[RMDB]
RNA sequence: GGGAACGACUCGAGUAGAGUCGAAAACGUAAAAGAGACCCUUGGAUGCAGCGAGAUUUCCUCUACUCACACCUCUGUUAGAUGUAGUGAGGUUCUUCACCCCCCAACCCCAGAUGUCAGAGGGCACCGACCGAUAAUCAUUCGUGAUUAUCGGUCGAAAAGAAACAACAACAACAAC
Reactivity to DMS in 0.01 (KOAc 150mM, MgCl2 10mM, bicine 150mM(pH8.5), 24C), signal-to-noise 2, nucleotides 027 to 126: c090g020u000a060a050a120a170g000a100g010a110c030c020c020u000u000g010g020a040u000g020c040a070g010c080g010a080g010a110u000u000u010c010c000u000c040u010a080c000u000c070a060c070a050c010c020u030c120u010g000u010u020a030g010a040u000g010u000a060g000u000g000a030g020g020u000u010c050u010u010c100a300c060c010c010c010c000c010a050a140c010c010c000c030a140g000a090u000g020u000c040a060g010a080g020g000g000c030a050c150